[RMDB]
RNA sequence: GGGAACGACUCGAGUAGAGUCGAAAACCUGAUGAAACUCACCAGGGAAUGCAUCAACGACAACUGCUUCAAGCUGACUAACAUCGUGCUUCAGAUGCGCGUGGAGAACACCGACAACUACUAUCCCAUUGUCAUGAAAAUAGUAGUGGAUAGCUACUCACUAUGGCCUGUUCGCAGGCCAUAGUGAAAAAGAAACAACAACAACAAC
Reactivity to 2A3 in 0.01 (KOAc 150mM, MgCl2 10mM, bicine 150mM(pH8.5), 24C), signal-to-noise 2, nucleotides 027 to 156: c010c000u010g060a090u020g040a060a050a130c060u040c090a020c030c040a030g030g010g010a100a000u140g010c070a020u060c030a040a060c010g080a040c010a070a020c060u100g010c050u200u090c040a140a060g020c010u030g100a140c040u060a080a000c010a080u060c030g040u050g030c030u150u130c030a110g030a110u100g000c010g000c000g010u100g020g060a040g010a090a060c040a070c030c050g090a040c010a060a070c030u120a000c000u010a010u120c010c030c040a030u040u050g080u050c090a120u190g030a040a010a050a060u050a040g030u000a020g030u000g010g000a000u030a070g010c020u020a060c000
Chemical mapping of a 207-nucleotide RNA with 2A3. For 2A3 the reverse transcriptase was SuperScript II with manganese. The 2A3 profile rests on 686 reads. The reactions ran in a buffer of 150 mM KOAc, 10 mM MgCl2 and 150 mM bicine (pH 8.5), at 24 C. Source: RMDB library OK3TST, as collected in RNAgym.